[RMDB]
RNA sequence: GGGAACGACUCGAGUAGAGUCGAAAAGAUAUGGACGAACGUGCCAGACGUGCUCGGAAACGAGCAUACGUCGGUAAUACGUUGUCCUAAGUCAAAAGCUGAAAAAUGGUUCGCCAUUUUUCAGCAACAUAAAUCCUCGGUUCGCCGAGGAUUUAUGAAAAGAAACAACAACAACAAC
Reactivity to 2A3 in 0.01 (KOAc 150mM, MgCl2 10mM, bicine 150mM(pH8.5), 24C), signal-to-noise 3, nucleotides 027 to 126: g020a020u070a020u120g010g000a020c140g150a060a010c020g000u020g010c020c040a030g000a010c000g020u000g010c000u010c010g000g000a070a070a040c010g000a000g000c020a010u150a010c010g000u010c010g000g000u120a160a120u250a120c000g010u000u010g010u020c000c010u020a200a010g020u000c030a010a000a080a190g000c000u000g000a000a000a000a000a000u010g030g020u080u150c300g070c060c020a010u000u000u000u020u000c000a000g000c000a000a000
Reactivity to DMS in 0.01 (KOAc 150mM, MgCl2 10mM, bicine 150mM(pH8.5), 24C), signal-to-noise 5, nucleotides 027 to 126: g010a050u000a300u000g000g020a010c000g010a010a010c000g020u000g000c010c010a100g050a020c000g030u000g010c000u000c000g010g000a090a070a180c010g010a010g000c000a040u010a020c040g020u000c010g000g020u000a060a100u000a100c020g000u000u000g010u000c010c000u010a030a130g000u010c040a100a070a100a110g000c000u000g000a000a000a010a010a000u000g010g010u000u010c260g020c010c000a000u010u000u000u000u000c000a020g000c000a030a040
The data come from the RNA Mapping Database (RMDB), library TTRDEL. The record gives the reactivity of an RNA of 177 nucleotides to 2A3 and DMS. For DMS the reverse transcriptase was MarathonRT. Reactivities are given for positions 27 through 126. The RNA was probed in 150 mM KOAc, 10 mM MgCl2 and 150 mM bicine (pH 8.5) at 24 C.